[RMDB]
RNA sequence: GGGAACGACUCGAGUAGAGUCGAAAAACGAGGUACGCAUCGAAAAUAUGACCGGUGUCAUAGCCUCUAGCACACAGAGGUCGCGUGGGUUCAACUCCCCCCCUUUUCCGAGGGUAUCGGAAACCAAAAAACACAAUUUGGUUCGCCAAAUUGUGAACGUUUAAGUAGCCUUCGGGCUACUUAAACGAAAAGAAACAACAACAACAAC
Reactivity to 2A3 in 0.01 (KOAc 150mM, MgCl2 10mM, bicine 150mM(pH8.5), 24C), signal-to-noise 1, nucleotides 027 to 156: a000c040g020a000g060g080u110a000c050g000c040a000u080c080g070a080a050a020a000u110a040u060g040a040c030c150g080g080u180g020u050c030a020u030a010g030c010c000u000c020u010a010g050c090a050c010a010c010a080g000a000g030g020u040c010g000c040g060u040g000g070g010u110u100c040a080a060c080u030c010c000c000c000c000c000c000u000u130u000u020c000c010g000a000g010g000g000u050a030u010c000g010g020a000a010a010c030c010a030a070a050a040a020a010c000a000c010a000a000u010u000u000g000g030u000u020c070g000c040c000a000a000a000u000u010g000u000g000a080a010